Record summary:
The data come from the RNA Mapping Database (RMDB), libraries RFM100 and RFMREP. The record gives the reactivity of an RNA of 177 nucleotides to 2A3 and DMS. The RNA was probed in 150 mM KOAc, 10 mM MgCl2 and 150 mM bicine (pH 8.5) at 24 C.
RNA sequence: GGGAACGACUCGAGUAGAGUCGAAAAUUCUUUGGAAUUACUCAGGAACCAGAACUUUUUACACAAAUGUAAGAAAUUCUACCAAGGAGUCCCCUUACCUAACAGCAUCUCACAAGGCUGCACCAGAACAUUGUUGGUAUUUCGAUACCAACAAUGUAAAAGAAACAACAACAACAAC
Reactivity to 2A3 in 0.01 (KOAc 150mM, MgCl2 10mM, bicine 150mM(pH8.5), 24C), signal-to-noise 9, nucleotides 027 to 126: u040u000c010u050u040u090g070g030a080a060u110u070a100c050u060c120a090g080g050a080a080c080c040a040g010a010a020c010u020u000u000u030u040a020c060a010c030a080a240a180u200g000u010a010a010g010a010a020a010u020u000c010u020a050c010c010a020a040g080g000a020g040u040c010c000c000c000u030u080a090c010c020u050a080a050c010a020g020c000a050u020c050u040c070a050c010a080a060g060g000c010u020g010c010a040c030c020a020g050a100
Reactivity to DMS in 0.01 (KOAc 150mM, MgCl2 10mM, bicine 150mM(pH8.5), 24C), signal-to-noise 5, nucleotides 027 to 126: u010u000c010u000u030u040g000g000a110a030u020u010a060c080u030c060a100g020g010a090a130c180c120a020g010a010a030c060u000u000u000u010u000a020c010a120c280a090a100a100u030g010u000a000a000g000a000a010a050u000u000c000u010a150c040c020a070a100g010g000a020g000u010c020c000c000c120u000u010a080c060c060u010a030a050c070a040g000c030a030u010c050u000c090a080c120a100a170g000g000c010u000g000c060a060c080c060a120g010a100